The data come from the RNA Mapping Database (RMDB), library OK1LIB. Chemical mapping of a 177-nucleotide RNA with DMS and 2A3. Values cover nucleotides 27 to 126. For DMS the reverse transcriptase was MarathonRT.
RNA sequence: GGGAACGACUCGAGUAGAGUCGAAAAGCAGUUCCGAAGGGGUCACUGCGAACACUUGACUACCGGUAGGGCCAGUCUUGUGGAUUGGACGGACUACUACCGGUCGGGCCAGUAGGACGUCCGAAAAGGCAUCCUUGAGCUUCGGCUCGAGGAUGCCAAAAGAAACAACAACAACAAC
Reactivity to DMS in 0.01 (KOAc 150mM, MgCl2 10mM, bicine 150mM(pH8.5), 24C), signal-to-noise 2, nucleotides 027 to 126: g000c000a000g010u000u030c000c040g000a300a120g010g030g000g020u010c260a060c040u020g000c000g000a070a140c040a050c070u000u010g020a010c060u010a110c000c010g000g040u070a030g000g000g080c170c080a000g000u000c000u020u070g020u020g000g000a240u080u000g000g020a010c000g000g030a060c030u000a030c000u000a170c050c010g000g000u010c090g000g000g020c250c110a040g000u010a020g020g000a020c000g000u000c010c000g000a030a060a080a080
Reactivity to 2A3 in 0.01 (KOAc 150mM, MgCl2 10mM, bicine 150mM(pH8.5), 24C), signal-to-noise 3, nucleotides 027 to 126: g000c010a000g010u050u000c010c000g020a130a100g070g040g000g000u160c060a000c000u010g010c000g020a140a010c010a010c000u010u040g010a000c000u040a030c040c000g180g190u300a100g140g020g000c050c030a000g000u000c000u040u110g060u130g060g130a150u110u140g010g000a000c000g000g010a010c000u100a000c010u020a040c000c010g030g170u090c040g050g000g040c070c050a000g000u000a000g000g050a010c000g040u000c020c000g000a000a030a000a000

The DMS profile rests on 1,841 reads. DMS (dimethyl sulfate) methylates the pairing face of unpaired adenines and cytosines.